[RMDB]
The record gives the reactivity of an RNA of 207 nucleotides to 2A3.
2A3 adducts were read by reverse transcription with SuperScript II with manganese.
It was measured as part of the RMDB library OK3TST.
The RNA was probed in 150 mM KOAc, 10 mM MgCl2 and 150 mM bicine (pH 8.5) at 24 C.
RNA sequence: GGGAACGACUCGAGUAGAGUCGAAAAAAGUCUGAUCUUAACUCCUCUAUUAAUGGCUGCUUCUAUAAUGGAGUUGUAAAUGUCAGGCCAAUAGUAGCUACUACCGUCGACACGUGUAGUGGGAACUAUGGCCAAAUGUUCAAUAUCUAUACUAGUCUCGAUAGCGAUGGUUCGCCAUCGCUAUCGAAAAAGAAACAACAACAACAAC
Reactivity to 2A3 in 0.01 (KOAc 150mM, MgCl2 10mM, bicine 150mM(pH8.5), 24C), signal-to-noise 1, nucleotides 027 to 156: a000a000g030u020c020u020g050a060u080c000u060u050a030a020c000u020c020c020u000c150u230a230u280u130a030a170u080g000g000c000u080g020c020u150u000c120u150a130u050a150a070u030g010g010a000g030u000u070g120u120a070a290a250u200g000u070c120a170g000g000c000c000a020a000u020a000g000u000a000g200c000u000a000c000u000a030c000c000g050u080c180g230a260c000a000c120g200u200g000u030a000g000u100g000g050g000a020a000c000u000a030u000g000g030c000c080a020a080a020u020g000u000u020c030a150a130u020a210u250c020u080a070u110a050c050u080a000g060u210c090